[RMDB]
RNA sequence: GGGAACGACUCGAGUAGAGUCGAAAAGAUAUGGAAACAGACAUGGCUCGUCAGCCGAUGAAAUUCUUGUUCUCGGAAACGAGAACAAGAAUGGAGGCUGGCUUGGCCAACAGCUGUUUCCUAAGUCGUUACCAUUGAAGUUCGCUUCAAUGGUAACAAAAGAAACAACAACAACAAC
Reactivity to 2A3 in 0.01 (KOAc 150mM, MgCl2 10mM, bicine 150mM(pH8.5), 24C), signal-to-noise 1, nucleotides 027 to 126: g040a050u180a040u220g010g000a000a000a000c000a000g150a020c060a130u100g020g000c010u010c070g000u000c020a000g000c000c000g050a080u050g020a000a030a010u010u030c000u020u000g000u000u000c000u000c000g030g010a140a140a070c000g000a000g000a010a000c010a000a020g000a010a000u010g010g000a030g010g000c020u000g010g010c030u000u220g060g010c010c000a010a000c020a030g040c000u000g000u010u010u020c000c000u000a070a040g120u030c060
Reactivity to DMS in 0.01 (KOAc 150mM, MgCl2 10mM, bicine 150mM(pH8.5), 24C), signal-to-noise 3, nucleotides 027 to 126: g000a120u030a300u020g000g000a010a010a000c010a000g000a050c090a300u000g020g010c010u000c300g010u010c010a010g030c010c000g020a120u010g010a130a080a020u000u000c010u000u000g000u000u000c000u000c000g000g000a070a120a160c020g000a010g000a010a010c000a010a000g000a010a000u000g000g000a040g050g020c000u000g010g010c000u000u020g000g000c000c010a010a100c300a210g000c000u000g010u000u000u000c010c000u010a030a080g010u020c160